Chemical mapping of a 177-nucleotide RNA with DMS and 2A3.
For 2A3, 2,796 sequencing reads were counted.
It was measured as part of the RMDB library TTRDES.

RNA sequence: GGGAACGACUCGAGUAGAGUCGAAAAGAUAUGGACCAUCAUGAUGGGAGCCAAACCAUCGGAAACGAUGGCACUGGCGUUGAUCAUCAUGAGUGGUCCUAAGUCAAAACCGCCCUUCGGGGCGGAAGUUGCAUGGAGUGUUCGCACUCCAUGCAACAAAAGAAACAACAACAACAAC
Reactivity to DMS in 0.01 (KOAc 150mM, MgCl2 10mM, bicine 150mM(pH8.5), 24C), signal-to-noise 1, nucleotides 027 to 126: g000a060u000a300u030g000g000a020c000c000a000u000c010a020u020g010a010u000g000g040g010a020g000c000c010a000a080a250c000c000a000u000c000g040g010a170a150a200c000g000a020u010g000g020c000a110c200u000g020g000c000g020u000u010g020a040u010c020a000u000c000a000u000g000a030g010u010g000g000u000c000c000u000a000a070g050u000c040a120a090a110a170c010c000g010c000c000c000u000u020c140g020g010g010g000c000g000g000a000a040
Reactivity to 2A3 in 0.01 (KOAc 150mM, MgCl2 10mM, bicine 150mM(pH8.5), 24C), signal-to-noise 1, nucleotides 027 to 126: g050a040u080a040u150g000g010a030c000c010a050u030c010a000u010g000a010u010g010g000g010a040g030c000c010a040a080a030c010c010a020u000c020g000g020a080a040a010c020g000a000u030g000g070c100a110c220u010g000g050c040g150u290u030g010a020u030c000a000u000c000a000u000g040a020g080u100g040g020u000c000c020u000a000a010g010u020c010a000a040a070a140c020c000g080c000c000c000u070u100c300g060g000g020g080c040g000g010a000a030